[RMDB]
RNA sequence: GGGAACGACUCGAGUAGAGUCGAAAAACACACUGAGCGCCACGCCCAGAUCUCGCGUGGGCUCCAUGCCGGGGAGACCGCGGUUUAGUCCGGAGUUGGGGGCAAGCCGCCUCUGAGCACGACGAGAGGCUCGUUACGGGUUCGCCCGUGGCGAGCCAAAAGAAACAACAACAACAAC
Reactivity to 2A3 in 0.01 (KOAc 150mM, MgCl2 10mM, bicine 150mM(pH8.5), 24C), signal-to-noise 1, nucleotides 027 to 126: a000c110a000c010a020c050u070g020a010g010c110g150c050c010a020c030g020c000c030c000a100g040a280u080c080u100c090g000c000g000u030g010g010g000c000u010c010c000a050u100g010c010c010g000g030g000g000a030g040a070c040c060g010c000g020g000u000u000u050a050g000u000c030c020g050g010a140g040u080u090g040g010g000g000g040c010a010a020g020c000c010g000c000c000u010c020u030g040a060g010c000a000c060g140a000c050g030a060g010a020
Reactivity to DMS in 0.01 (KOAc 150mM, MgCl2 10mM, bicine 150mM(pH8.5), 24C), signal-to-noise 2, nucleotides 027 to 126: a060c070a090c160a050c070u000g000a040g020c010g020c010c010a040c070g030c070c070c040a120g000a120u040c070u020c090g000c030g050u030g010g000g000c020u000c010c030a090u060g030c000c010g000g000g000g000a120g020a080c140c080g050c000g000g000u000u010u020a050g000u000c000c020g080g000a070g010u010u000g000g000g000g010g000c000a060a080g000c070c030g000c030c040u000c020u000g000a070g040c020a120c090g060a090c060g030a130g000a130